Conditions: 150 mM KOAc, 10 mM MgCl2 and 150 mM bicine (pH 8.5), 24 C. An RNA of 207 nucleotides, treated with DMS and 2A3 and read out base by base. Source: RMDB library ARCHII, as collected in RNAgym. Values cover nucleotides 27 to 156. Values are in units of 0.01, from 0 to 300, in steps of 10.
RNA sequence: GGGAACGACUCGAGUAGAGUCGAAAAAGCAUCAGUGAGCUCGUAAAUCCAGCUGAAACAAACCAACUGCGAACGACGAACGUUUCGCCCUCGCCGCUUAAACACCGGUGAGCGUCUCAACGGCAGGCCGAUGGGCCGGGCCCAAGCCGCAAGGUGGGAUAUGAUCAAGGUUCGCCUUGAUCAUAUCAAAAGAAACAACAACAACAAC
Reactivity to DMS in 0.01 (KOAc 150mM, MgCl2 10mM, bicine 150mM(pH8.5), 24C), signal-to-noise 1, nucleotides 027 to 156: a110g000c040a090u000c020a080g030u020g010a120g010c000u010c030g020u000a030a100a170u000c050c030a050g040c000u000g000a190a110a150c080a030a160a130c070c010a030a020c070u000g000c050g000a060a100c050g000a080c010g000a100a100c070g000u000u000u000c000g040c010c030c020u000c010g040c000c000g010c000u000u010a070a080a060c110a090c100c040g030g040u000g000a040g020c070g000u000c070u000c000a070a020c030g000g050c040a050g020g010c010c010g000a110u010g010g040g040c010c000g030g010g000c000c000c010a040a140g010c000c000g070c050a050a090g010g070u000g000g000
Reactivity to 2A3 in 0.01 (KOAc 150mM, MgCl2 10mM, bicine 150mM(pH8.5), 24C), signal-to-noise 3, nucleotides 027 to 156: a000g050c020a040u100c040a010g030u020g080a040g030c030u030c080g090u090a070a110a050u060c040c020a020g000c020u060g050a060a090a090c050a070a100a070c070c050a030a100c050u050g000c020g040a030a040c020g110a030c080g020a160a010c030g010u020u070u090c010g010c040c010c000u010c000g000c000c000g000c020u040u080a040a020a000c030a000c020c000g000g040u010g000a010g010c020g040u030c020u020c060a080a050c020g010g000c010a010g020g000c030c010g110a100u130g050g000g040c010c010g040g020g020c000c010c000a040a010g010c000c010g020c040a040a030g080g000u060g020g080